[RMDB]
RNA sequence: GGGAACGACUCGAGUAGAGUCGAAAAGACGGUGGCUGCAAGUCGCAUCGCAAAACCGCGGUAAGUGGAGUUAGCGAGAGGAGGCUGGGUUUUGGCUUCCUUAAGCAAUCGGUCACCGAGAAGGUGUUAAACGGCGCAUGCUUCGGCAUGCGCCGAACUACCCUUUGACGUUCGCGUCAAAGGGUAGAAAAGAAACAACAACAACAAC
Reactivity to 2A3 in 0.01 (KOAc 150mM, MgCl2 10mM, bicine 150mM(pH8.5), 24C), signal-to-noise 1, nucleotides 027 to 156: g090a010c020g000g000u000g040g000c070u060g070c140a100a050g010u080c110g060c010a060u030c000g000c010a050a020a050a000c050c020g040c020g000g140u270a190a020g030u040g070g000a100g000u040u100a010g040c010g040a050g000a010g030g000a010g000g010c000u050g030g110g220u060u120u170u300g050g010c000u000u010c000c000u000u000a120a000g000c000a010a010u030c000g000g020u010c000a010c010c030g030a050g010a000a000g030g010u030g000u150u100a070a120a080c000g000g010c020g030c000a010u010g000c050u070u130c200g040g000c000a000u020g000c000g000c000c000g000a000a000

Chemical mapping of a 207-nucleotide RNA with 2A3. It was measured as part of the RMDB library M2RFPK. The reactions ran in a buffer of 150 mM KOAc, 10 mM MgCl2 and 150 mM bicine (pH 8.5), at 24 C.